[RMDB]
RNA sequence: GGGAACGACUCGAGUAGAGUCGAAAAUGGCGGUGAUCAAGUACAUGAGGUUGCUGCUGUAAGAAGUGUUACUGUCGAGUACAACAUUCAUGCUGUAUUAGACACACUACUUGCUUCUUCUAGUCUUCGGGCAUAACCUUCGGGUUAUGCAAAAGAAACAACAACAACAAC
Reactivity to DMS in 0.01 (KOAc 150mM, MgCl2 10mM, bicine 150mM(pH8.5), 24C), signal-to-noise 7, nucleotides 027 to 129: u050g000g000c040g070g000u030g000a030u020c050a050a130g000u060a130c250a120u080g030a160g010g010u000u000g020c020u020g000c040u000g000u000a040a020g030a020a000g020u000g000u040u030a150c210u040g030u020c000g000a060g030u030a020c000a010a030c040a070u000u000c220a110u040g040c050u000g010u000a020u020u010a210g010a030c010a020c080a030c090u040a040c020u040u020g030c050u030u010c000u000u000c120u020a050g000u020c040u000u000c090g010g020
Reactivity to 2A3 in 0.01 (KOAc 150mM, MgCl2 10mM, bicine 150mM(pH8.5), 24C), signal-to-noise 9, nucleotides 027 to 129: u130g020g000c010g010g010u020g010a010u030c050a090a090g130u150a210c110a200u200g110a060g040g000u010u010g000c010u000g000c010u010g010u030a020a010g000a020a010g010u020g040u150u110a130c170u050g000u000c010g000a000g010u000a000c000a040a000c010a070u090u300c080a070u240g000c020u000g000u000a010u000u020a010g000a000c000a000c010a000c020u050a040c020u040u100g040c000u020u020c000u070u020c060u040a060g070u010c080u060u070c090g050g040